[RMDB]
RNA sequence: GGGAACGACUCGAGUAGAGUCGAAAAAAAUAGUCUUCUGAGCAUUUGUCAUAUGGAAGUAAUCAUAGCUCAGAAACUAUACUUACCAUGAUGCUUCUUGUAAUCAUUGGUGAAUGGGUAGCUAAACAUUCCCAUUUUGAGACAGAGUCAGUAUCAGCAUACCGACCAGUUUCGACUGGUCGGUAUGAAAAGAAACAACAACAACAAC
Reactivity to DMS in 0.01 (KOAc 150mM, MgCl2 10mM, bicine 150mM(pH8.5), 24C), signal-to-noise 1, nucleotides 027 to 156: a010a020a000u000a000g000u010c090u000u000c000u000g010a050g000c010a230u000u030u010g040u020c090a220u010a160u000g010g010a150a210g030u000a110a160u000c030a160u000a090g000c000u000c010a090g010a030a000a030c030u000a060u010a080c130u000u000a000c010c000a160u030g000a140u010g030c030u000u020c000u010u020g010u010a120a080u000c000a040u000u000g030g000u000g030a020a020u000g030g040g050u010a220g050c130u000a110a070a080c060a100u010u000c010c000c000a130u000u000u010u000g020a170g030a120c050a090g000a090g020u000c020a150g000u020a070u000c030a230g000
Reactivity to 2A3 in 0.01 (KOAc 150mM, MgCl2 10mM, bicine 150mM(pH8.5), 24C), signal-to-noise 3, nucleotides 027 to 156: a000a040a000u040a010g000u040c180u030u000c020u010g000a010g000c040a200u030u190u200g090u120c070a070u130a120u300g100g040a100a060g080u210a100a030u120c060a020u070a070g000c000u000c000a000g000a000a000a000c000u000a010u030a050c030u060u090a040c000c040a060u080g000a020u000g000c040u010u050c030u080u060g050u070a220a130u030c000a030u030u090g030g010u160g030a010a010u000g000g080g000u120a070g100c200u220a120a000a080c000a020u040u000c000c000c000a010u070u060u010u060g040a030g010a000c010a020g080a020g090u080c080a000g020u040a020u060c010a010g030

Chemical mapping of a 207-nucleotide RNA with DMS and 2A3. For DMS, 1,453 sequencing reads were counted. The RNA was probed in 150 mM KOAc, 10 mM MgCl2 and 150 mM bicine (pH 8.5) at 24 C. 2A3 adducts were read by reverse transcription with SuperScript II with manganese.